[RMDB]
RNA sequence: GGGAACGACUCGAGUAGAGUCGAAAAGAAAGAAAGAAAGACACGAGGGCAGCGAUGGCCCGCCGGGCGAUCUGUGGUCGCCAUGUGCCCGGCGUCGAGCAGUGGCGCGCCCGGGCCGUCAGAUCAAAAAACGCCCACUACUUCGGUAGUGGGCGAAGUCUAUUCUUGUCUUCGGACAAGAAUAGACAAAAGAAACAACAACAACAAC
Reactivity to 2A3 in 0.01 (KOAc 150mM, MgCl2 10mM, bicine 150mM(pH8.5), 24C), signal-to-noise 1, nucleotides 027 to 156: g020a010a070a000g030a060a100a030g020a040a150a000g080a000c030a030c130g050a120g010g010g020c000a080g050c060g110a070u090g030g000c000c000c000g010c040c000g010g000g000c000g020a020u040c080u180g130u110g110g030u130c020g020c020c020a050u120g030u120g010c000c080c060g070g010c010g080u080c000g010a020g030c080a050g030u150g090g000c010g000c000g030c050c070c000g000g010g000c040c010g000u000c040a010g010a080u130c120a030a030a000a090a120a030c000g000c000c030c000a000c000u020a010c000u010u010c040g060g030u000a000g040u030g000g030g010c000g000a000a000